Chemical mapping of a 177-nucleotide RNA with 2A3 and DMS. For DMS, 5,207 sequencing reads were counted. High DMS reactivity at an A or C suggests that its Watson-Crick edge is free. 2A3 adducts were read by reverse transcription with SuperScript II with manganese. Reactivities are given for positions 27 through 126. Source: RMDB library OK2TRN, as collected in RNAgym.

RNA sequence: GGGAACGACUCGAGUAGAGUCGAAAAGCCACGGGCGCAUUCCGGGUCCCGGGGCCGGGGCGCCGACGGCUGCCGACGGGAGCCCGGCACCCGCGCCCAGACACGUCACGGCCGAGCUGCCACGCGAGGCAGGAUCCAUAUUCGUAUGGAUCCUGCCAAAAGAAACAACAACAACAAC
Reactivity to 2A3 in 0.01 (KOAc 150mM, MgCl2 10mM, bicine 150mM(pH8.5), 24C), signal-to-noise 3, nucleotides 027 to 126: g050c020c020a040c080g000g020g000c030g010c030a080u180u060c060c020g020g000g020u030c020c030c050g000g010g010g010c000c010g000g010g030g020c090g010c010c000g060a030c070g040g000c090u180g160c060c010g070a110c050g010g010g070a070g160c020c000c000g000g040c010a020c010c040c040g010c030g000c000c000c000a000g000a000c050a010c010g050u040c030a030c100g040g000c010c010g040a050g010c070u070g020c040c010a040c040g040c020g030a090
Reactivity to DMS in 0.01 (KOAc 150mM, MgCl2 10mM, bicine 150mM(pH8.5), 24C), signal-to-noise 5, nucleotides 027 to 126: g000c030c020a110c160g010g000g010c030g010c040a180u000u010c130c060g010g010g000u000c100c040c020g000g010g000g010c020c010g000g000g000g010c070g000c010c010g000a060c110g020g010c030u010g040c020c020g000a100c110g020g000g010a120g020c000c010c000g010g000c180a030c050c040c040g010c130g020c010c010c010a070g000a100c110a080c060g000u010c080a100c070g000g000c040c020g000a090g000c050u000g000c010c040a070c060g010c080g010a160